RNA sequence: GGGAACGACUCGAGUAGAGUCGAAAACAGACGGCGUGGAUGAAGACGAUCUCGGAUGUGUCCUUGGUCGUAUAGGCGACCCACCUGGUCUGGGCGAGCUGCCCUUCGUCGGCGCGGUAGGCCUGCAAGGAUUUAAUAGUUUCGACUAUUAAAUCCUAAAAGAAACAACAACAACAAC
Reactivity to DMS in 0.01 (KOAc 150mM, MgCl2 10mM, bicine 150mM(pH8.5), 24C), signal-to-noise 7, nucleotides 027 to 126: c080a080g010a050c020g020g010c070g030u000g000g010a040u000g000a070a060g000a050c020g010a010u000c010u000c130g010g010a070u010g020u020g010u000c000c010u000u000g000g010u000c010g010u000a060u010a110g000g010c040g000a080c020c010c030a040c030c020u000g020g010u000c140u000g000g000g010c060g000a090g010c050u000g010c030c020c020u000u000c040g020u000c030g010g000c020g010c030g010g020u000a060g010g000c020c010u000g020c170a150
Reactivity to 2A3 in 0.01 (KOAc 150mM, MgCl2 10mM, bicine 150mM(pH8.5), 24C), signal-to-noise 7, nucleotides 027 to 126: c040a040g090a050c030g080g020c040g020u040g140g020a040u050g030a060a020g040a010c010g010a010u000c010u010c000g030g000a090u130g230u080g100u230c000c000u010u010g020g000u000c020g000u030a070u150a180g070g000c010g020a090c000c010c000a020c010c100u210g050g060u090c070u040g000g030g000c040g050a050g020c050u080g000c030c010c000u020u020c020g020u020c020g060g020c020g000c010g050g020u040a030g020g090c010c010u030g030c060a060